Overview
Chemical mapping of a 177-nucleotide RNA with DMS and 2A3. Source: RMDB library M2PK50, as collected in RNAgym. Reactivities are given for positions 27 through 126. The 2A3 profile rests on 2,213 reads. For DMS, 2,814 sequencing reads were counted. For 2A3 the reverse transcriptase was SuperScript II with manganese.

RNA sequence: GGGAACGACUCGAGUAGAGUCGAAAAGAGCCUUGGUUCGCCAAGGCUCAAAUAAAUUCAGGUGAUUUGCUACGUUUAAGUGCAGCUAGAAAUUCAAAGGAAAAAGGCACAAGUUCGCUUGUGCCAAGUAAUGGAAUUUGUUCGCAAAUUCCAUUACAAAAGAAACAACAACAACAAC
Reactivity to DMS in 0.01 (KOAc 150mM, MgCl2 10mM, bicine 150mM(pH8.5), 24C), signal-to-noise 3, nucleotides 027 to 126: g010a010g020c000c020u000u010g000g010u010u010c210g010c000c000a000a000g010g000c010u010c000a010a030a060u010a030a090a110u000u000c080a170g030g010u000g010a070u000u010u000g010c020u000a030c060g020u000u010u000a090a090g030u010g010c040a020g000c030u000a060g000a080a030a050u000u000c060a040a070a120g020g000a030a040a030a120a170g000g010c000a010c000a000a010g000u010u010c200g020c000u000u000g010u000g000c000c000a000a030
Reactivity to 2A3 in 0.01 (KOAc 150mM, MgCl2 10mM, bicine 150mM(pH8.5), 24C), signal-to-noise 2, nucleotides 027 to 126: g010a000g010c000c000u010u010g050g020u050u090c150g000c040c000a000a000g000g000c010u020c000a020a000a000u000a000a010a010u060u060c030a020g120g050u070g090a090u060u070u140g020c020u080a080c040g080u120u100u160a180a050g020u040g020c010a000g020c030u020a030g120a060a050a000u210u110c080a060a090a070g050g040a060a060a040a010a070g000g000c000a000c000a000a000g020u030u090c200g040c110u000u000g000u000g010c000c010a000a010

DMS adducts were read by reverse transcription with MarathonRT.